[RMDB]
RNA sequence: GGGAACGACUCGAGUAGAGUCGAAAACAAUUUUUUUGUGUGGCCGAAAUUUGUCAUGCAUUAGUCGUAUGUCAUUCAUAGUUGGUGACAUGUCACUUUUUUUUGGCAUGCCAAUUAUUUCAUCGGACCCCUAUCAGUAGUUCGCUACUGAUAGGGGAAAAGAAACAACAACAACAAC
Reactivity to 2A3 in 0.01 (KOAc 150mM, MgCl2 10mM, bicine 150mM(pH8.5), 24C), signal-to-noise 2, nucleotides 027 to 126: c020a030a000u060u110u020u050u070u300u180g110u030g020u090g090g000c000c030g020a060a030a070u070u030u010g010u030c010a000u010g000c040a060u000u050a010g020u020c100g020u040a000u030g040u010c010a020u260u050c050a090u090a230g120u060u200g030g010u010g010a020c000a000u020g030u030c010a010c000u080u100u020u020u060u010u150u140g170g000c010a000u000g000c000c010a010a010u120u080a090u060u130u090c080a060u040c040g100g010a150
Reactivity to DMS in 0.01 (KOAc 150mM, MgCl2 10mM, bicine 150mM(pH8.5), 24C), signal-to-noise 1, nucleotides 027 to 126: c030a090a000u000u000u020u020u030u010u000g010u000g030u010g020g040c030c040g010a010a090a080u000u000u000g000u000c000a010u000g000c010a090u000u010a040g020u000c260g020u000a000u000g000u000c000a020u000u010c030a080u010a180g010u000u010g010g010u000g010a020c010a000u000g020u000c120a020c050u000u000u000u010u000u000u010u020g020g030c000a010u000g000c050c000a010a010u010u010a060u000u000u000c080a140u000c030g010g030a300
Source information
Chemical mapping of a 177-nucleotide RNA with 2A3 and DMS. Values cover nucleotides 27 to 126. The reactions ran in a buffer of 150 mM KOAc, 10 mM MgCl2 and 150 mM bicine (pH 8.5), at 24 C. DMS adducts were read by reverse transcription with MarathonRT. 2A3 adducts were read by reverse transcription with SuperScript II with manganese.